An RNA of 177 nucleotides, treated with DMS and 2A3 and read out base by base. For 2A3 the reverse transcriptase was SuperScript II with manganese. The data come from the RNA Mapping Database (RMDB), library OK2TST.

RNA sequence: GGGAACGACUCGAGUAGAGUCGAAAAGGCCAGGAGAGAUUAUGCAGGGCGGGCCUCAGCUGCCCGGACAAUUAACAGCAAUUAAUAAAGAGAACGCGCACUGCCCUGUGCCUGAGGCCCGGCAAGGGCCUCCUCACAUGUUCGCAUGUGAGGAGGCAAAAGAAACAACAACAACAAC
Reactivity to DMS in 0.01 (KOAc 150mM, MgCl2 10mM, bicine 150mM(pH8.5), 24C), signal-to-noise 9, nucleotides 027 to 126: g010g010c030c020a020g010g010a150g010a110g020a120u010u000a050u010g010c040a080g010g000g010c020g010g000g010c040c010u000c030a080g010c070u000g010c030c040c150g010g010a070c110a060a070u010u010a070a110c090a080g010c070a080a130u010u010a070a100u010a070a090a110g010a150g000a050a090c120g000c060g000c060a060c050u000g000c010c000c010u000g010u010g010c030c010u000g010a070g010g000c010c010c020g000g010c120a090a080g000g000
Reactivity to 2A3 in 0.01 (KOAc 150mM, MgCl2 10mM, bicine 150mM(pH8.5), 24C), signal-to-noise 9, nucleotides 027 to 126: g020g000c040c010a010g050g020a100g010a020g010a060u110u140a080u300g030c030a030g030g040g030c020g000g010g010c000c000u020c010a020g000c030u050g010c010c020c000g000g020a010c040a030a130u160u140a150a040c020a030g070c030a030a100u120u130a100a120u250a140a170a020g080a010g010a080a020c040g010c000g010c130a020c050u030g010c000c000c010u030g030u090g010c000c000u010g000a030g020g000c000c000c010g000g020c030a030a040g090g050